[RMDB]
RNA sequence: GGGAACGACUCGAGUAGAGUCGAAAAGGUGUCUGCGGGCGAUCGUCAGGAAGACAGUGCUCAUGCUGCCCUGCUGACGCUUCAGGCAGAACUCCGGACGCUGGAGAAGCAUGCCGGAGCAAAUGAGUGAUCACACGUUAUUCGUAACGUGUGAUCAAAAAGAAACAACAACAACAAC
Reactivity to DMS in 0.01 (KOAc 150mM, MgCl2 10mM, bicine 150mM(pH8.5), 24C), signal-to-noise 4, nucleotides 027 to 126: g030g010u000g010u000c000u010g010c090g010g000g040c150g010a050u000c040g010u010c010a040g010g010a060a050g000a050c000a020g000u000g010c190u010c140a070u000g010c000u000g000c020c010c020u000g000c010u000g010a030c030g010c080u000u000c030a050g010g000c010a030g020a100a220c010u000c000c000g000g000a140c110g000c010u000g010g020a160g000a160a030g000c000a090u000g000c000c010g000g000a010g000c140a050a070a050u000g000a120g000
Reactivity to 2A3 in 0.01 (KOAc 150mM, MgCl2 10mM, bicine 150mM(pH8.5), 24C), signal-to-noise 3, nucleotides 027 to 126: g110g010u030g000u030c020u020g000c050g020g010g000c010g150a300u010c020g020u040c010a000g040g070a070a070g090a100c000a000g030u040g050c060u080c200a070u300g000c000u010g010c000c000c000u020g000c000u030g020a000c010g000c000u050u030c000a010g000g000c010a000g020a090a040c000u010c000c010g000g000a020c010g000c010u060g000g170a300g060a210a010g000c000a020u230g050c000c010g010g000a000g000c030a000a070a070u220g040a040g140
Chemical mapping of a 177-nucleotide RNA with DMS and 2A3. Source: RMDB library OK2TRN, as collected in RNAgym. 2A3 is a SHAPE reagent: it acylates the 2'-hydroxyl of flexible nucleotides of all four kinds. The reactions ran in a buffer of 150 mM KOAc, 10 mM MgCl2 and 150 mM bicine (pH 8.5), at 24 C.